RNA sequence: GGGAACGACUCGAGUAGAGUCGAAAAACGGUGACGAAGAAUCCGACUGCGGUGUUCGAGUCGGGUGCGUGGCUCACGGAAGAUGGUGGCCCGGUGUUCUCGCUGACUGCGAAGGAAGCUGCACCUCCGGCUGCUGCGCCCACGCGCAACGAUUCGCCAUUACGCUGGUGUUCGCACCAGCGUAAUGAAAAGAAACAACAACAACAAC
Reactivity to DMS in 0.01 (KOAc 150mM, MgCl2 10mM, bicine 150mM(pH8.5), 24C), signal-to-noise 2, nucleotides 027 to 156: a110c030g010g020u000g000a130c060g000a150a130g000a130a130u010c000c010g040a040c060u020g060c010g010g000u000g030u000u000c020g000a000g030u010c020g020g000g050u000g000c020g050u000g000g000c080u000c020a090c030g040g010a050a070g000a060u000g010g060u000g000g050c010c040c060g030g060u000g000u000u000c040u010c040g010c000u000g040a300c170u000g040c120g030a180a090g030g000a030a070g030c000u010g020c250a090c010c020u010c040c030g010g010c030u000g000c000u010g000c000g010c300c020c020a020c020g000c000g000c040a070a060c030g000a080u010u010c030g010c300
Reactivity to 2A3 in 0.01 (KOAc 150mM, MgCl2 10mM, bicine 150mM(pH8.5), 24C), signal-to-noise 3, nucleotides 027 to 156: a010c020g000g020u050g030a050c090g040a080a140g040a100a070u030c030c050g070a080c100u110g040c050g000g020u050g020u110u200c000g000a000g000u000c000g000g000g010u010g000c010g000u000g000g010c050u100c140a090c090g100g030a090a080g110a120u220g010g000u010g000g000c000c010c010g000g000u010g010u080u060c160u070c140g000c000u010g040a070c010u030g020c050g060a040a020g010g010a030a000g010c020u020g000c020a000c010c000u090c130c010g000g000c020u000g000c010u040g030c020g000c020c010c000a000c000g000c000g010c010a160a170c010g000a020u000u000c000g000c000